[RMDB]
Structure probing data (DMS and 2A3) for a 177-nucleotide construct.
Conditions: 150 mM KOAc, 10 mM MgCl2 and 150 mM bicine (pH 8.5), 24 C.
Reactivities are given for positions 27 through 126.
The data come from the RNA Mapping Database (RMDB), library OK1LIB.
High 2A3 reactivity points to a flexible backbone, as in loops and unpaired stretches.
RNA sequence: GGGAACGACUCGAGUAGAGUCGAAAAACUGUUUGCAUUUGAGUUGCAAAUUUACAGCUCCAUCAGCGGUCGGUCCGCAGGUUGCGGCUGCAUCAUUAGCCCCACCAAGGUCACGGUCGGAUCGAUGCACUCACUCCAGUUUCGACUGGAGUGAGUGAAAAGAAACAACAACAACAAC
Reactivity to DMS in 0.01 (KOAc 150mM, MgCl2 10mM, bicine 150mM(pH8.5), 24C), signal-to-noise 2, nucleotides 027 to 126: a150c040u000g000u010u000u000g010c010a020u000u000u080g000a240g000u040u010g030c090a070a040a060u070u060u020a030c070a050g000c090u000c020c040a020u000c090a100g000c020g010g020u000c010g000g030u010c030c010g010c190a110g000g000u030u000g040c300g010g000c030u000g000c190a160u090c140a030u060u020a070g000c020c000c050c110a030c030c070a180a170g010g000u000c000a040c060g000g000u000c020g000g000a040u000c080g000a110u000g000
Reactivity to 2A3 in 0.01 (KOAc 150mM, MgCl2 10mM, bicine 150mM(pH8.5), 24C), signal-to-noise 5, nucleotides 027 to 126: a000c050u040g010u050u020u040g040c040a070u050u090u200g210a170g100u100u010g010c010a020a040a040u130u160u130a130c060a030g010c010u030c010c000a040u040c040a020g060c020g030g000u000c000g010g040u000c000c010g030c110a030g050g000u050u060g100c170g050g000c020u030g000c030a130u110c020a010u180u230a000g000c000c000c000c000a000c000c000a040a050g010g000u020c050a030c280g000g010u010c000g000g030a060u070c080g000a000u080g000